Structure probing data (DMS and 2A3) for a 177-nucleotide construct. The data come from the RNA Mapping Database (RMDB), library M2PK90. The RNA was probed in 150 mM KOAc, 10 mM MgCl2 and 150 mM bicine (pH 8.5) at 24 C.

RNA sequence: GGGAACGACUCGAGUAGAGUCGAAAAGGAAAUAAUGCACAUAAUCCAGUCGCAGACGCUAAAAAUAACGCUGCGUCGCGUCGGAUGUGGCAACGCACACCGAAGUGCAAACGGUAGCGUAAAAAAAGUUAAGGGUAUGGUUCGCCAUACCCUUAACAAAAGAAACAACAACAACAAC
Reactivity to DMS in 0.01 (KOAc 150mM, MgCl2 10mM, bicine 150mM(pH8.5), 24C), signal-to-noise 2, nucleotides 027 to 126: g010g030a070a100a090u010a090a150u010g010c010a100c040a030u000a220a070u000c000c000a150g010u000c020g030c010a110g000a000c010g030c010u000a000a030a080a110a120u010a100a060c160g030c190u020g000c010g030u030c000g020c010g000u000c000g030g000a020u000g000u000g020g000c010a060a060c070g010c000a050c130a120c010c000g010a080a030g010u020g000c160a030a070a060c080g020g000u000a060g010c030g000u000a020a000a050a040a040a040a120
Reactivity to 2A3 in 0.01 (KOAc 150mM, MgCl2 10mM, bicine 150mM(pH8.5), 24C), signal-to-noise 3, nucleotides 027 to 126: g090g050a050a120a000u190a040a080u210g060c050a060c010a260u210a210a130u190c020c020a090g010u040c000g020c060a070g000a020c000g000c020u060a070a070a020a050a140u250a130a030c070g030c190u060g000c020g020u000c000g000c000g010u000c000g020g000a010u020g010u010g000g000c000a010a000c000g040c010a030c020a000c080c030g050a120a040g180u250g170c030a100a030a020c030g000g010u020a030g000c000g020u050a110a000a000a000a000a000a070